[RMDB]
RNA sequence: GGGAACGACUCGAGUAGAGUCGAAAAUAAAAUAAUGCACAUAAUCCAGUCGCAGACGCUAAAAAUGACGCUGCGUCGCGACGGAUGUGGCAACCCGCACUCACGCCGAAGUGAAAUCGGUAAAAAACAAAUGAGAUGGUUUCGACCAUCUCAUUUGAAAAGAAACAACAACAACAAC
Reactivity to DMS in 0.01 (KOAc 150mM, MgCl2 10mM, bicine 150mM(pH8.5), 24C), signal-to-noise 2, nucleotides 027 to 126: u030a090a060a130a050u020a080a100u000g000c030a080c000a040u000a230a040u000c010c000a190g010u010c000g010c000a070g030a030c010g060c010u000a000a050a060a120a110u000g010a100c260g000c120u000g020c000g020u000c010g000c000g010a000c000g000g000a000u000g030u000g000g010c000a040a120c010c000c000g020c090a040c100u010c070a070c060g000c000c000g000a040a040g000u000g000a050a040a060u000c000g000g000u000a000a040a090a030a060a130
Reactivity to 2A3 in 0.01 (KOAc 150mM, MgCl2 10mM, bicine 150mM(pH8.5), 24C), signal-to-noise 3, nucleotides 027 to 126: u100a000a030a000a050u230a020a100u080g030c050a050c010a300u160a240a080u170c010c010a080g020u010c000g000c050a070g010a010c000g000c020u070a130a020a120a060a140u270g060a060c110g020c190u090g000c000g010u000c000g000c010g000a000c000g000g000a000u000g010u000g000g030c000a020a030c000c000c000g000c050a040c010u070c000a050c090g040c010c010g010a020a000g010u080g180a180a080a030u010c000g000g000u100a150a060a020a030a010a000